This 207-nucleotide RNA was probed chemically with 2A3 and DMS. Values cover nucleotides 27 to 156. Source: RMDB library OK3TST, as collected in RNAgym. The reactions ran in a buffer of 150 mM KOAc, 10 mM MgCl2 and 150 mM bicine (pH 8.5), at 24 C.

[RMDB]
RNA sequence: GGGAACGACUCGAGUAGAGUCGAAAAAGUCAUCAACAAAGUCCACUACUGACAUCCAGCCAUCAACACCAUCAUGGCUCGGUGGUCCAGGAUCACUUGGAGCAGAUGACCUGAUCCUUCUGAUAAUGUCUGGAGGUCAGUAGUAGCCUAACGCUACGCUCUAGAUUCAAUUCGUUGAAUCUAGAGCAAAAGAAACAACAACAACAAC
Reactivity to 2A3 in 0.01 (KOAc 150mM, MgCl2 10mM, bicine 150mM(pH8.5), 24C), signal-to-noise 7, nucleotides 027 to 156: a000g130u090c050a100u060c030a070a110c070a130a150a010g050u040c040c020a010c010u010a000c000u000g000a000c000a000u000c000c000a000g030c020c000a030u070c070a050a110c010a040c080c010a020u050c020a080u170g160g000c050u010c050g010g000u000g000g010u010c020c080a070g070g030a030u030c010a030c080u100u160g150g020a020g030c030a020g040a170u070g040a070c000c030u030g030a040u070c060c000u100u070c060u050g040a050u040a170a020u030g020u010c000u000g000g000a000g010g000u000c000a000g000u000a000g000u000a000g010c000c030u120a130a040c100g010c070u050a040c080
Reactivity to DMS in 0.01 (KOAc 150mM, MgCl2 10mM, bicine 150mM(pH8.5), 24C), signal-to-noise 2, nucleotides 027 to 156: a100g000u010c050a050u000c020a090a120c070a110a110a100g010u000c040c030a280c020u020a040c030u020g000a040c010a050u000c010c020a000g000c030c000a010u000c000a060a080c080a080c050c040a100u000c010a130u010g020g000c030u000c100g020g010u000g000g000u000c020c080a120g020g030a060u000c040a020c020u010u000g050g050a060g050c010a300g020a110u020g000a090c070c000u010g000a090u010c020c070u040u010c060u000g030a100u000a000a050u000g010u000c010u000g000g010a020g020g020u000c000a000g010u000a040g020u000a030g010c050c020u000a050a080c100g050c050u010a150c150